[RMDB]
RNA sequence: GGGAACGACUCGAGUAGAGUCGAAAAGAUAUGGACUCGUACUAUCGCAUCGAUCUCGGAAACGAGGGAGCGACGUACAGAGUCCUAAGUCAAAACUUAUCGAACAUCUUCGGAUGUUCGAUAAGAAUCAGCAUUGAGAGUUCGCUCUCAAUGCUGAAAAAGAAACAACAACAACAAC
Reactivity to DMS in 0.01 (KOAc 150mM, MgCl2 10mM, bicine 150mM(pH8.5), 24C), signal-to-noise 2, nucleotides 027 to 126: g000a060u010a300u000g030g020a010c000u010c000g000u000a000c000u000a300u000c010g000c010a300u000c130g000a070u010c020u000c000g030g020a080a040a190c000g010a010g000g010g000a030g020c000g010a000c300g000u000a010c000a110g030a000g000u000c000c000u000a000a060g010u010c020a040a150a150a230c000u000u000a000u010c010g000a020a000c000a000u010c000u000u000c200g040g000a000u000g020u000u000c000g010a000u000a000a000g000a070a050
Reactivity to 2A3 in 0.01 (KOAc 150mM, MgCl2 10mM, bicine 150mM(pH8.5), 24C), signal-to-noise 1, nucleotides 027 to 126: g020a030u040a030u170g010g000a000c000u010c040g010u030a000c020u040a040u050c020g050c070a200u300c080g130a100u030c000u010c030g000g010a160a080a020c010g000a030g010g010g000a030g000c020g000a010c020g000u010a020c180a030g000a000g000u000c000c000u000a010a000g050u020c040a000a000a060a160c010u000u010a010u030c000g010a000a000c030a020u010c030u050u070c190g050g000a000u000g010u000u000c000g000a000u000a000a010g000a000a040
The data come from the RNA Mapping Database (RMDB), library TTRDEL. This 177-nucleotide RNA was probed chemically with DMS and 2A3. For DMS, 1,149 sequencing reads were counted. Conditions: 150 mM KOAc, 10 mM MgCl2 and 150 mM bicine (pH 8.5), 24 C. DMS adducts were read by reverse transcription with MarathonRT.